[RMDB]
RNA sequence: GGGAACGACUCGAGUAGAGUCGAAAACUUUCAGGACGGCGCGCCUGUGCGGCGCACGCGCGCUCAGUUACUUAGCAACCUCGGCGCUAAGCCACCCCAGGUGGAGCCCAGCAACAACAGAGCCACCGCGUCCCCCACCAAUCAGCGCCGACCUCGAAGUGAUUAAAUACUUCGGUAUUUAAUCACUAAAAGAAACAACAACAACAAC
Reactivity to 2A3 in 0.01 (KOAc 150mM, MgCl2 10mM, bicine 150mM(pH8.5), 24C), signal-to-noise 1, nucleotides 027 to 156: c010u020u110u090c040a030g020g000a020c010g000g000c000g000c020g020c010c050u120g030u010g000c120g020g050c090g010c070a020c000g000c000g000c000g000c000u010c010a020g020u050u040a020c020u050u090a030g000c020a040a140c040c050u090c070g090g000c080g020c110u120a080a100g050c030c000a060c010c040c030c050a040g010g000u010g000g060a020g000c000c010c000a050g020c040a040a110c010a020a020c010a040g000a000g000c020c010a110c010c040g000c020g010u000c000c000c000c000c010a000c010c030a040a080u110c030a030g010c040g000c020c000g010a030c010c000u050c050g040a030

Source information:
The record gives the reactivity of an RNA of 207 nucleotides to 2A3. The data come from the RNA Mapping Database (RMDB), library OK3TST. The reactions ran in a buffer of 150 mM KOAc, 10 mM MgCl2 and 150 mM bicine (pH 8.5), at 24 C.